RNA sequence: GGGAACGACUCGAGUAGAGUCGAAAAGACUACGGGUUCGCCCGUAGUCACUUACCGAGAAUGCGACUCGGUAUAUAACGCAAACCGUUGGAAACAAGGGAAUCACCAGUUCCUUCGGGAACUGGAAUCUAUAUUUAACGUUCGCGUUAAAUAUAGAAAAAGAAACAACAACAACAAC
Reactivity to DMS in 0.01 (KOAc 150mM, MgCl2 10mM, bicine 150mM(pH8.5), 24C), signal-to-noise 7, nucleotides 027 to 126: g010a010c000u010a000c010g000g000g020u010u010c240g020c000c000c010g010u000a000g000u000c000a010c120u000u010a170c010c000g010a020g010a090a080u000g010c140g000a080c000u000c000g010g010u000a020u010a050u010a040a040c060g000c060a050a130a160c060c020g000u010u000g000g000a090a090a150c050a030a040g000g010g010a150a090u010c150a140c010c000a010g000u000u000c000c000u000u010c170g030g000g010a000a000c000u000g000g000a030a030
Reactivity to 2A3 in 0.01 (KOAc 150mM, MgCl2 10mM, bicine 150mM(pH8.5), 24C), signal-to-noise 4, nucleotides 027 to 126: g000a000c000u000a010c000g000g000g070u020u090c190g100c020c010c000g000u000a000g000u000c000a010c000u000u060a040c000c000g000a000g030a070a100u110g050c060g120a080c040u010c000g000g010u000a000u000a000u000a020a010c020g000c030a030a090a070c030c030g190u040u040g030g020a050a060a030c020a030a030g040g010g040a050a070u140c050a050c070c000a000g000u010u000c000c000u010u040c230g050g000g000a000a000c000u000g000g000a000a000
Conditions: 150 mM KOAc, 10 mM MgCl2 and 150 mM bicine (pH 8.5), 24 C.
The record gives the reactivity of an RNA of 177 nucleotides to DMS and 2A3.
For DMS the reverse transcriptase was MarathonRT.
As a SHAPE reagent, 2A3 marks flexible, mostly unpaired nucleotides at the ribose 2'-OH.